[RMDB]
RNA sequence: GGGAACGACUCGAGUAGAGUCGAAAACCUUUCGGCGAGACUUGGCGUGUUUCUGUCGUUCUUAGUAUAGCAUAUUUAUAAUGCGCUUACAUUUUCUUGCCAUGAAGAUAACAAUAUAUUGCUAAGAGAUGAGAUGGAAGUUCGCUUCCAUCUCAUCAAAAGAAACAACAACAACAAC
Reactivity to 2A3 in 0.01 (KOAc 150mM, MgCl2 10mM, bicine 150mM(pH8.5), 24C), signal-to-noise 2, nucleotides 027 to 126: c010c000u000u070u020c000g030g000c000g010a020g010a040c040u080u060g020g010c030g050u060g000u020u020u000c050u050g020u030c030g000u000u000c000u060u040a050g030u040a040u050a080g010c030a010u060a120u180u150u070a140u190a200a040u010g000c050g000c050u070u090a040c010a140u130u000u040u000c000u010u030g040c000c000a040u110g000a020a020g100a080u090a110a000c010a060a010u130a010u060a030u160u120g000c010u020a060a010g020a020
Reactivity to DMS in 0.01 (KOAc 150mM, MgCl2 10mM, bicine 150mM(pH8.5), 24C), signal-to-noise 1, nucleotides 027 to 126: c100c030u000u000u000c100g010g000c020g000a050g010a030c260u000u000g020g040c100g020u010g020u000u000u010c080u000g050u000c020g000u010u020c010u000u000a070g010u010a030u030a060g010c030a130u000a070u000u010u010a060u010a100a020u000g000c030g010c030u000u010a100c120a120u000u000u010u000c010u010u010g000c050c010a080u000g030a090a030g000a090u000a070a100c130a040a070u000a050u000a050u000u000g020c020u000a030a110g000a290